[RMDB]
RNA sequence: GGGAACGACUCGAGUAGAGUCGAAAAGGGGCAACUCUUCUCAGAAUCCAGCGGGGGCGUGGAGAGAGGGCCGCGGUGCUCUGGAGUAGAGGCUCUGCCUUCGAAACACCAUCGAUCGUCCCUUCUUCUUUACCUUCUCCUGGCUCUUCCGAUGAGAUCAGAAUGAGAUCUUCGGAUCUCAUUCUGAAAAAGAAACAACAACAACAAC
Reactivity to 2A3 in 0.01 (KOAc 150mM, MgCl2 10mM, bicine 150mM(pH8.5), 24C), signal-to-noise 2, nucleotides 027 to 156: g040g000g030g000c040a040a040c050u000c000u150u050c030u040c030a040g060a120a180u300c010c000a110g000c160g000g000g000g020g030c130g010u000g020g000a010g000a010g000a000g010g000g000c010c010g030c000g000g000u000g010c000u000c020u020g010g000a010g000u000a000g010a030g020g000c030u060c170u300g040c000c000u150u140c010g000a010a000a000c010a010c130c000a000u000c010g010a300u020c000g010u000c010c010c000u060u030c030u070u000c000u000u050u030a000c000c000u030u070c010u040c000c010u000g000g000c000u000c000u070u030c020c030g130a090u140g030a030g000a060

Chemical mapping of a 207-nucleotide RNA with 2A3. The 2A3 profile rests on 1,211 reads. The reactions ran in a buffer of 150 mM KOAc, 10 mM MgCl2 and 150 mM bicine (pH 8.5), at 24 C. 2A3 adducts were read by reverse transcription with SuperScript II with manganese. Reactivities are given for positions 27 through 156.